RNA sequence: GGGAACGACUCGAGUAGAGUCGAAAAGGUGAUCGUGCCCAUCGCCAAGGCGGUGGCCAACGCAGCCAUUCAGGCGGGCGCGUCGGCGGCGGGCGCUGCGGUCAACUCUCAGGCACCCGGCGCGGGCGCGUUCUACACCGUUCGCGGUGUAGAACGCAAAAGAAACAACAACAACAAC
Reactivity to DMS in 0.01 (KOAc 150mM, MgCl2 10mM, bicine 150mM(pH8.5), 24C), signal-to-noise 5, nucleotides 027 to 126: g020g020u010g010a100u010c060g010u010g000c300c010c010a020u000c020g020c000c030a110a180g030g020c010g020g020u000g010g030c060c010a140a060c070g030c130a220g010c000c000a130u010u000c110a120g010g010c060g000g000g000c010g020c010g020u000c030g000g000c020g010g020c030g010g000g010c020g010c030u000g010c200g010g010u000c080a100a120c110u000c010u000c090a300g000g000c030a050c020c000c000g000g010c030g010c030g010g010g020c090
Reactivity to 2A3 in 0.01 (KOAc 150mM, MgCl2 10mM, bicine 150mM(pH8.5), 24C), signal-to-noise 3, nucleotides 027 to 126: g060g010u090g010a230u110c030g050u110g020c010c000c000a020u020c010g000c030c030a080a130g120g000c030g010g090u070g040g000c000c020a060a040c040g040c090a030g010c040c030a030u090u150c070a050g000g090c020g040g040g030c060g000c010g000u000c030g090g010c020g020g030c010g010g000g000c020g000c010u020g010c010g010g040u080c100a070a120c040u080c000u020c090a040g060g090c030a070c020c010c010g100g080c050g020c070g030g020g010c020